[RMDB]
RNA sequence: GGGAACGACUCGAGUAGAGUCGAAAAGAUAUGGAGUGCACAGAGUCGCUCCUCUCUACUACUAUAUGCUCGGAAACGAGCAUACGAAUAGUAGAGAGGAGACGACGACGAAGUGCACUCCUAAGUCCCUUAAGGUAAGCUUCGGCUUACCUUAAGGAAAAGAAACAACAACAACAAC
Reactivity to DMS in 0.01 (KOAc 150mM, MgCl2 10mM, bicine 150mM(pH8.5), 24C), signal-to-noise 2, nucleotides 027 to 126: g000a080u010a300u000g010g010a040g020u000g000c000a000c010a040g010a300g020u010c000g000c000u010c000c010u000c000u000c000u000a000c000u000a010c080u000a300u000a000u000g010c000u000c000g040g000a140a090a300c030g020a000g020c000a000u020a000c100g000a080a140u000a000g030u010a030g000a040g000a010g020g000a090g010a000c090g020a130c020g030a100c220g010a190a240g020u000g000c010a000c010u020c000c000u000a000a110g000u000c020
Background:
An RNA of 177 nucleotides, treated with DMS and read out base by base. The reactions ran in a buffer of 150 mM KOAc, 10 mM MgCl2 and 150 mM bicine (pH 8.5), at 24 C. The DMS profile rests on 1,404 reads. It was measured as part of the RMDB library TTRINS.